Background
Chemical mapping of a 177-nucleotide RNA with 2A3. For 2A3, 289 sequencing reads were counted.

[RMDB]
RNA sequence: GGGAACGACUCGAGUAGAGUCGAAAAGAUUUUAUCUUAUCCCCUUUCCCUCUCCCGAGUGCACUCAGUUUAACUGUUGUCAGUUUUUACUCAGUGUUGGAUUUAAUUAUGUAGGACCAAAACAUUCCUCGAUAGUGGCUUUCGAGCCACUAUCGAGAAAAGAAACAACAACAACAAC
Reactivity to 2A3 in 0.01 (KOAc 150mM, MgCl2 10mM, bicine 150mM(pH8.5), 24C), signal-to-noise 1, nucleotides 027 to 126: g000a000u040u230u220u300a060u000c000u000u000a000u250c000c010c010c000u000u000u010c000c000c000u010c010u030c000c000c100g000a000g070u170g020c000a000c000u030c030a000g000u000u120u070a060a000c010u000g140u300u300g020u060c000a000g000u040u000u090u090u000a060c060u010c000a000g000u000g010u180u070g000g000a020u000u140u150a300a300u020u080a180u280g210u030a030g010g030a070c000c050a000a040a020a050c010a000u070u030c000